Notes:
Chemical mapping of a 170-nucleotide RNA with 2A3 and DMS. It was measured as part of the RMDB library 15KLIB. In probing experiments dimethyl sulfate is read out at A N1 and C N3, which are open when not base-paired. The 2A3 profile rests on 18,198 reads. For DMS, 18,631 sequencing reads were counted.

RNA sequence: GGGAACGACUCGAGUAGAGUCGAAAACUCUCCUUGUCGGUGAAUCCUCCCCUGAGGGGCCUCUUUCCAGGUCCGGAGUCUACUUCCAUCUGGACCACCCGGGCCUUCUUCGCCGGGGGCGCCCCUUUAAGUUGACCUUUCGAGGUCAACAAAAGAAACAACAACAACAAC
Reactivity to 2A3 in 0.01 (KOAc 150mM, MgCl2 10mM, bicine 150mM(pH8.5), 24C), signal-to-noise 7, nucleotides 027 to 129: c010u010c000u000c000c000u010u030g010u020c000g040g040u090g150a080a090u020c000c000u010c000c010c000c010u020g010a020g000g000g020g010c000c000u050c040u040u090u050c060c030a020g000g000u010c010c020g020g000a020g000u040c040u080a110c080u290u080c040c060a170u080c070u080g030g010a000c010c000a100c020c010c000g020g010g000c010c000u070u070c020u070u070c030g080c050c010g020g010g010g020g000c050g030c000c000c000c000u000u020u040a120a020
Reactivity to DMS in 0.01 (KOAc 150mM, MgCl2 10mM, bicine 150mM(pH8.5), 24C), signal-to-noise 4, nucleotides 027 to 129: c040u020c010u020c000c000u010u020g030u030c070g000g010u070g090a110a180u040c030c020u010c010c010c010c040u000g020a000g000g000g100g000c000c000u040c060u040u050u060c110c120a110g000g000u050c040c070g050g000a070g000u020c040u030a090c170u060u050c090c070a060u030c190u060g020g020a020c040c020a160c080c000c010g000g000g000c030c060u010u030c080u000u000c090g000c050c000g000g000g000g000g000c280g030c000c000c000c000u000u000u000a080a120